Overview
Chemical mapping of a 207-nucleotide RNA with 2A3 and DMS. For 2A3, 3,143 sequencing reads were counted. The data come from the RNA Mapping Database (RMDB), library OK3TST. Values cover nucleotides 27 to 156.
RNA sequence: GGGAACGACUCGAGUAGAGUCGAAAACGGACGUACCGCGACGCCGACGGCCGCCGCGUCAAGGGGCUCCAACUCGGCUAUCCCAUCAUCCGGUCCAGCCGGACCGAGUUGGUGCUCUCCUCGCCGGGCCCGGUCAUCGACUACCGGAUGCCCGAGGCAUAAGUAGCGGAUUCGUCCGCUACUUAUGAAAAGAAACAACAACAACAAC
Reactivity to 2A3 in 0.01 (KOAc 150mM, MgCl2 10mM, bicine 150mM(pH8.5), 24C), signal-to-noise 2, nucleotides 027 to 156: c050g040g050a010c040g030u090a120c040c060g000c050g080a090c060g050c040c010g090a100c080g060g000c030c000g050c030c050g020c020g050u030c060a110a090g010g000g000g010c010u010c000c000a000a000c000u000c000g010g010c050u100a110u150c040c040c030a090u200c040a030u000c030c010g020g040u090c190c170a080g030c030c020g000g000a000c000c000g000a000g000u000u000g000g000u000g000c000u020c000u010c000c000u030c010g070c050c020g010g010g000c000c010c000g000g000u000c010a010u140c090g120a110c030u040a020c010c020g040g000a070u210g000c020c000c000g010a050g020g000
Reactivity to DMS in 0.01 (KOAc 150mM, MgCl2 10mM, bicine 150mM(pH8.5), 24C), signal-to-noise 2, nucleotides 027 to 156: c030g000g000a030c060g000u010a060c040c040g020c010g020a070c100g010c020c030g000a100c070g030g000c030c020g000c010c030g000c040g020u000c060a090a080g030g010g040g020c000u000c010c010a040a010c010u000c000g000g030c080u020a100u000c050c040c070a200u010c080a140u000c030c030g000g000u010c090c160a200g010c070c060g020g000a040c010c000g000a030g000u000u000g010g040u010g000c020u000c030u000c040c020u010c040g020c040c010g010g010g000c020c020c000g020g020u000c040a070u000c040g020a150c040u000a100c040c010g000g020a150u000g030c020c010c000g000a040g010g000